[RMDB]
RNA sequence: GGGAACGACUCGAGUAGAGUCGAAAAUGUUGGACAAGGAUGUCAAUCCACAGGAUAUGAAAAAUAUGGAGAAAAUAUUGACCACGAUUGACGGGUUUUCGGGUCCUGAGUUGAAUCUCGUCAUGCACACCGGAAAAUCAUUCGUGAUUUUCCGGUGAAAAGAAACAACAACAACAAC
Reactivity to DMS in 0.01 (KOAc 150mM, MgCl2 10mM, bicine 150mM(pH8.5), 24C), signal-to-noise 2, nucleotides 027 to 126: u000g020u000u010g010g010a060c060a070a090g000g000a070u000g000u010c060a040a070u020c030c050a120c060a050g010g000a090u020a120u000g000a020a110a050a060a070u000a030u000g000g020a160g010a080a080a120a030u020a060u000u000g010a100c030c010a090c120g040a120u000u000g000a060c010g000g010g010u000u000u000u000c030g020g010g020u010c010c020u020g000a120g000u000u020g010a060a110u000c010u010c020g010u010c120a080u000g020c210a160
An RNA of 177 nucleotides, treated with DMS and read out base by base.
Source: RMDB library OK2TST, as collected in RNAgym.
The reactions ran in a buffer of 150 mM KOAc, 10 mM MgCl2 and 150 mM bicine (pH 8.5), at 24 C.
DMS adducts were read by reverse transcription with MarathonRT.